Structure probing data (2A3) for a 177-nucleotide construct.
RNA sequence: GGGAACGACUCGAGUAGAGUCGAAAACAACGCACCGCCGCCGGCUGGCAGCCGCUCAAGACCGGUAUCACCACCCAUAUCGGUUCGGCGGGCAUGGCGCCGGAAGCCAAGAGCGGAUAUCCGGCCACGAGACGGCCAUGUUCGCAUGGCCGUCUCGAAAAGAAACAACAACAACAAC
Reactivity to 2A3 in 0.01 (KOAc 150mM, MgCl2 10mM, bicine 150mM(pH8.5), 24C), signal-to-noise 1, nucleotides 027 to 126: c050a000a020c100g040c080a080c030c000g030c020c010g000c020c070g020g100c000u070g220g020c040a090g060c000c000g000c030u030c060a090a000g020a040c020c020g020g010u000a000u080c050a070c020c060a080c010c010c000a000u040a000u050c020g000g000u130u000c000g050g020c000g000g000g000c020a040u060g010g000c060g000c020c020g000g040a080a040g000c000c120a210a000g050a040g020c070g010g000a050u030a060u010c040c000g000g000c000c010a050